[RMDB]
RNA sequence: GGGAACGACUCGAGUAGAGUCGAAAACCUGUCAUCAUCACCUUCUUGUCCGUGCUCAUCAGCAUCUCAGACAAGUUACUAUGCUGGGAAAAUCAGGACCUCACACUUAGAUGAUCUUCUUAGAACCCAAGCAGUAAGUGUUCGCACUUACUGCUUGAAAAGAAACAACAACAACAAC
Reactivity to 2A3 in 0.01 (KOAc 150mM, MgCl2 10mM, bicine 150mM(pH8.5), 24C), signal-to-noise 2, nucleotides 027 to 126: c000c020u000g120u070c040a070u000c000a010u020c000a030c020c020u050u020c000u020u090g020u000c000c000g010u040g020c020u030c060a220u040c000a050g000c010a040u010c030u000c020a040g070a190c010a030a030g000u010u030a130c090u090a030u140g020c010u030g000g000g060a070a050a010a060u060c020a030g030g070a060c030c010u050c010a060c000a000c030u090u070a050g030a120u090g010a040u030c000u110u040c010u000u110a040g050a120a050c020c000
Reactivity to DMS in 0.01 (KOAc 150mM, MgCl2 10mM, bicine 150mM(pH8.5), 24C), signal-to-noise 2, nucleotides 027 to 126: c020c020u010g000u010c040a090u000c040a060u000c100a070c100c050u000u010c040u000u000g010u000c020c130g000u020g000c100u010c100a130u010c110a100g020c060a100u010c080u000c060a130g010a070c020a040a070g010u000u000a070c140u000a070u000g020c020u000g000g000g010a050a080a130a060u010c100a070g010g000a110c030c020u000c050a020c060a070c060u000u010a040g040a050u020g000a070u000c100u000u000c030u010u010a080g000a100a170c110c110